[RMDB]
The record gives the reactivity of an RNA of 177 nucleotides to DMS and 2A3. The reactions ran in a buffer of 150 mM KOAc, 10 mM MgCl2 and 150 mM bicine (pH 8.5), at 24 C.
RNA sequence: GGGAACGACUCGAGUAGAGUCGAAAAGCGGUGACACCGUGCGGGAGGUGUCCUUCGCGGACAAGUCUUUUCAGUACUGUCCAACGUGUCAGACCGGUGGCAAGGCGCUGGCCGACCGGCGUAUGUCGACCUGUAGUUACUUCGGUAACUACAGGUCAAAAGAAACAACAACAACAAC
Reactivity to DMS in 0.01 (KOAc 150mM, MgCl2 10mM, bicine 150mM(pH8.5), 24C), signal-to-noise 3, nucleotides 027 to 126: g000c020g000g000u000g000a020c020a020c040c050g020u010g020c060g010g010g010a230g000g000u000g010u000c030c040u000u010c070g040c100g000g000a020c040a050a120g000u000c020u000u000u000u020c170a140g040u010a050c030u000g000u000c000c030a130a110c130g010u000g000u000c070a100g030a120c030c020g020g040u000g010g000c030a090a130g000g000c050g010c040u000g000g000c030c040g000a060c030c020g020g000c050g010u000a050u010g010u010c100
Reactivity to 2A3 in 0.01 (KOAc 150mM, MgCl2 10mM, bicine 150mM(pH8.5), 24C), signal-to-noise 3, nucleotides 027 to 126: g000c010g000g060u060g020a010c000a010c030c020g050u080g050c010g000g000g050a070g000g030u050g040u040c040c010u100u090c060g010c050g010g010a000c030a120a030g000u000c000u020u210u090u180c070a030g020u100a020c020u020g010u000c010c010a010a060c060g070u080g030u060c040a030g020a180c050c010g040g020u040g010g010c070a100a150g080g000c010g020c070u060g030g010c000c010g030a050c020c000g050g020c010g030u110a070u190g130u080c030